[RMDB]
Source information:
Chemical mapping of a 177-nucleotide RNA with 2A3 and DMS. Source: RMDB library M2PK50, as collected in RNAgym.
RNA sequence: GGGAACGACUCGAGUAGAGUCGAAAACUGGAUUCUUUCGAGAAUCCAGCAUGUCUAGUCGCUAGGGAACGAUCAACGCUAGCGACUAGACUUUAUUGAUCGCAUUUGCCUCUUUCGAGAGGCAAAAGUAUGCAUUUUGAUUCGUCAAAAUGCAUACAAAAGAAACAACAACAACAAC
Reactivity to 2A3 in 0.01 (KOAc 150mM, MgCl2 10mM, bicine 150mM(pH8.5), 24C), signal-to-noise 4, nucleotides 027 to 126: c000u000g000g000a010u010u000c010u020u130u140c200g090a010g000a010a000u000c000c010a000g030c010a040u070g010u000c000u000a000g000u000c000g010c000u000a000g050g040g090a100a120c080g060a210u150c080a040a060c030g020c200u000a000g000c000g000a000c000u000a000g000a000c000u000u020u000a030u010u050g050a020u140c110g000c140a060u010u020u020g000c000c010u030c000u070u080u130c260g070a020g000a000g030g010c000a000a000a010a000
Reactivity to DMS in 0.01 (KOAc 150mM, MgCl2 10mM, bicine 150mM(pH8.5), 24C), signal-to-noise 8, nucleotides 027 to 126: c010u000g000g000a000u000u000c000u000u000u020c150g010a020g000a010a000u000c000c000a000g020c120a070u000g010u000c000u000a000g010u000c010g010c000u000a010g000g000g010a100a130c150g000a110u010c160a090a120c020g000c000u000a000g010c000g000a010c000u000a000g000a010c010u000u010u000a060u010u000g000a090u000c080g020c260a200u000u000u000g000c000c000u000c000u000u000u010c170g010a020g000a010g010g000c000a000a000a010a070
The 2A3 profile rests on 6,693 reads. The reactions ran in a buffer of 150 mM KOAc, 10 mM MgCl2 and 150 mM bicine (pH 8.5), at 24 C. For DMS, 14,932 sequencing reads were counted.